Conditions: 150 mM KOAc, 10 mM MgCl2 and 150 mM bicine (pH 8.5), 24 C. Structure probing data (DMS and 2A3) for a 207-nucleotide construct. The DMS profile rests on 3,972 reads.
RNA sequence: GGGAACGACUCGAGUAGAGUCGAAAAGCGAGAUUUCGAUCUCGCGUGAAGGGGUCCAUCGAUCAGGAGAGCCAUCGAUCGUACUGAAGCCUCCACGGUACGGGAGGCUACUCCUGGGAGGACGGAGGCACCCGGUUUUUAUGGCUUCGGCCAUAAACCUCACAGAUAUGUUCGCAUAUCUGUGAGGAAAAGAAACAACAACAACAAC
Reactivity to DMS in 0.01 (KOAc 150mM, MgCl2 10mM, bicine 150mM(pH8.5), 24C), signal-to-noise 2, nucleotides 027 to 156: g020c010g010a010g000a030u000u000u000c260g010a020u000c010u000c000g010c000g000u000g010a120a110g000g010g020g020u000c020c020a210u010c040g000a110u000c020a020g000g000a080g000a220g030c010c000a300u020c210g000a090u000c030g010u000a080c010u010g000a080a080g010c010c000u000c000c010a300c080g000g000u000a030c010g020g030g000a060g030g020c040u040a020c000u000c000c000u010g010g020g030a070g010g010a090c070g000g010a030g080g050c010a130c010c000c020g010g000u000u000u010u000u000a010u000g000g000c000u000u010c300g070g000c000c000a000u000a010a030a120
Reactivity to 2A3 in 0.01 (KOAc 150mM, MgCl2 10mM, bicine 150mM(pH8.5), 24C), signal-to-noise 5, nucleotides 027 to 156: g010c020g010a000g010a020u090u140u230c270g060a040u050c000u000c000g000c010g010u040g070a110a070g060g020g040g000u010c020c010a060u300c020g000a000u000c000a010g000g000a010g000a000g020c000c000a110u300c070g000a000u010c000g000u000a000c000u010g040a160a020g010c000c000u000c000c010a000c000g010g000u000a000c010g000g010g000a000g000g020c010u020a070c000u000c000c000u010g010g000g000a000g010g000a010c010g010g000a000g000g000c000a010c000c010c000g010g000u100u070u020u020u010a000u000g000g000c000u040u090c270g090g000c000c000a000u010a000a010a010